RNA sequence: GGGAACGACUCGAGUAGAGUCGAAAAUGUGCUUGCCCGUGUGAAAGGCCUUCAUGCUGCCGGCGAUCAGAGCGAUGUCGAGAUCGGCUGCCGGCAGAUCCUUGCCGUCGAGCCUGCGCAUCGCGAGCACCAUGGCGGGAUUCGUCCCGCCAUGGUGAAAAGAAACAACAACAACAAC
Reactivity to DMS in 0.01 (KOAc 150mM, MgCl2 10mM, bicine 150mM(pH8.5), 24C), signal-to-noise 2, nucleotides 027 to 126: u060g020u020g020c020u000u000g000c000c010c080g060u020g060u070g000a040a060a090g000g020c030c040u010u010c040a020u020g020c000u000g000c030c000g000g000c000g060a120u030c120a110g030a190g010c020g010a060u000g010u080c050g010a090g010a030u000c180g000g020c000u000g020c060c000g000g010c000a000g000a080u000c040c040u000u000g010c030c060g030u020c050g000a070g000c000c010u000g010c000g000c020a020u000c110g000c020g010a060g000
Reactivity to 2A3 in 0.01 (KOAc 150mM, MgCl2 10mM, bicine 150mM(pH8.5), 24C), signal-to-noise 4, nucleotides 027 to 126: u220g010u070g030c020u020u090g010c000c010c040g040u040g000u000g110a180a140a060g020g030c010c030u130u100c050a080u170g020c000u030g040c000c000g000g000c000g030a040u100c060a050g060a000g120c020g050a070u090g120u280c050g040a080g010a190u100c040g050g040c050u040g000c000c000g000g000c000a000g000a000u000c020c020u120u070g020c000c030g020u020c040g050a000g000c020c000u040g000c010g000c020a000u010c010g020c040g010a000g020
An RNA of 177 nucleotides, treated with DMS and 2A3 and read out base by base. The reactions ran in a buffer of 150 mM KOAc, 10 mM MgCl2 and 150 mM bicine (pH 8.5), at 24 C. It was measured as part of the RMDB library OK1LIB. DMS adducts were read by reverse transcription with MarathonRT.